The record gives the reactivity of an RNA of 207 nucleotides to 2A3 and DMS. Values cover nucleotides 27 to 156. For 2A3, 1,910 sequencing reads were counted. It was measured as part of the RMDB library ARCHII.

[RMDB]
RNA sequence: GGGAACGACUCGAGUAGAGUCGAAAAGCCGGGCGCGGUGGCGCACGCCUGUAGUCCCAGCUACUCGGGAGGCUGAGACAGGAGGAUCGCUUGAGUCCAGGAGUUCUGGGCUGUAGUGCGCUAUGCCGAUCGGGUGUCCGCACUAAGUUCGGCAUCAUCCUUAGUAGUUGUUCGCAACUACUAAGGAAAAAGAAACAACAACAACAAC
Reactivity to 2A3 in 0.01 (KOAc 150mM, MgCl2 10mM, bicine 150mM(pH8.5), 24C), signal-to-noise 3, nucleotides 027 to 156: g010c000c020g020g010g000c050g020c040g050g000u030g080g040c000g000c000a000c010g020c010c000u070g080u140a050g020u030c010c000c000a010g000c020u120a080c020u080c100g030g070g020a070g010g000c010u020g000a000g000a020c050a050g020g110a030g040g010a080u090c020g010c020u040u080g080a010g000u000c000c000a010g050g060a210g120u280u200c010u000g000g000g040c010u000g030u060a070g080u050g000c030g000c020u030a030u090g060c010c010g050a110u140c040g000g000g020u010g020u040c060c040g000c010a010c020u060a100a040g010u030u000c000g000g000c030a040u080c040a030
Reactivity to DMS in 0.01 (KOAc 150mM, MgCl2 10mM, bicine 150mM(pH8.5), 24C), signal-to-noise 1, nucleotides 027 to 156: g030c030c010g000g030g020c030g020c060g010g110u000g010g050c050g060c050a030c030g000c000c000u010g000u000a080g000u000c000c000c000a050g020c010u000a010c000u000c140g010g030g020a270g040g000c000u000g000a010g020a040c020a190g020g030a110g030g000a080u000c050g010c030u000u000g000a090g000u000c020c000a040g030g020a220g040u000u000c010u000g010g030g000c030u100g000u020a050g020u000g000c010g040c000u000a050u020g030c000c000g020a100u000c060g010g040g020u010g010u000c120c070g030c050a080c010u000a070a050g000u010u000c010g010g010c010a080u000c030a180